RNA sequence: GGGAACGACUCGAGUAGAGUCGAAAAGAUAUGGACACAAGCGAAGAACUGACGGUGUCGGAAACGACAUUCAGGGAGCUUGGUCCUAAGUCAAACGCCUUUUCCAAGUUCGCUUGGAAAAGGCGAAGGGACACAUAUUCUUCGGAAUAUGUGUCCCAAAAGAAACAACAACAACAAC
Reactivity to DMS in 0.01 (KOAc 150mM, MgCl2 10mM, bicine 150mM(pH8.5), 24C), signal-to-noise 1, nucleotides 027 to 126: g010a020u000a300u000g030g000a000c020a080c000a030a020g000c000g000a020a120g010a150a050c010u000g020a090c300g070g000u000g000u000c000g010g000a150a070a100c000g000a000c000a020u000u000c000a060g000g000g000a020g000c010u000u010g000g000u000c000c000u000a010a010g000u000c050a140a150a300c020g000c000c000u000u000u000u000c000c000a020a010g030u000u030c220g000c040u000u000g000g000a000a000a040a000g000g000c000g000a020a000
Reactivity to 2A3 in 0.01 (KOAc 150mM, MgCl2 10mM, bicine 150mM(pH8.5), 24C), signal-to-noise 1, nucleotides 027 to 126: g030a020u060a040u110g050g000a090c180a030c010a300a000g040c000g230a300a020g030a150a120c010u010g020a030c130g190g000u020g000u070c000g050g050a090a130a010c000g030a000c010a000u050u000c010a000g000g100g000a010g020c000u000u020g000g000u020c000c000u040a170a010g070u000c020a000a090a090c020g030c000c000u000u000u000u000c000c000a000a020g000u020u160c280g000c240u000u020g000g000a010a030a010a000g030g010c000g000a000a000
Structure probing data (DMS and 2A3) for a 177-nucleotide construct. For 2A3, 1,380 sequencing reads were counted. For DMS, 603 sequencing reads were counted. Conditions: 150 mM KOAc, 10 mM MgCl2 and 150 mM bicine (pH 8.5), 24 C.